Annotation
The record gives the reactivity of an RNA of 177 nucleotides to 2A3. It was measured as part of the RMDB library RFM100. The 2A3 profile rests on 937 reads. The reactions ran in a buffer of 150 mM KOAc, 10 mM MgCl2 and 150 mM bicine (pH 8.5), at 24 C.
[RMDB]
RNA sequence: GGGAACGACUCGAGUAGAGUCGAAAAAAUGGUUUGAUAACCAUGUGUAGGAUGCUGAUUUGAGCCUCUCCCAAUUCUCUAGUAGCCUCACUGGGCCAGGCAGCACUCAAUAUACCUCUUCACCACUCCAAGGUUACUCGUUCGCGAGUAACCUUGGAAAAGAAACAACAACAACAAC
Reactivity to 2A3 in 0.01 (KOAc 150mM, MgCl2 10mM, bicine 150mM(pH8.5), 24C), signal-to-noise 2, nucleotides 027 to 126: a000a000u100g000g030u080u000u100g240a290u160a080a000c000c010a020u040g070u040g020u120a040g040g010a070u040g020c070u050g030a270u110u120u190g080a070g000c030c000u060c000u000c010c030c000a020a070u110u050c050u020c010u020a020g040u120a030g050c000c010u080c000a040c050u080g000g060g000c000c000a000g030g000c000a060g000c030a010c040u050c020a120a000u050a000u070a100c000c030u020c000u060u080c010a040c060c000a020c000u000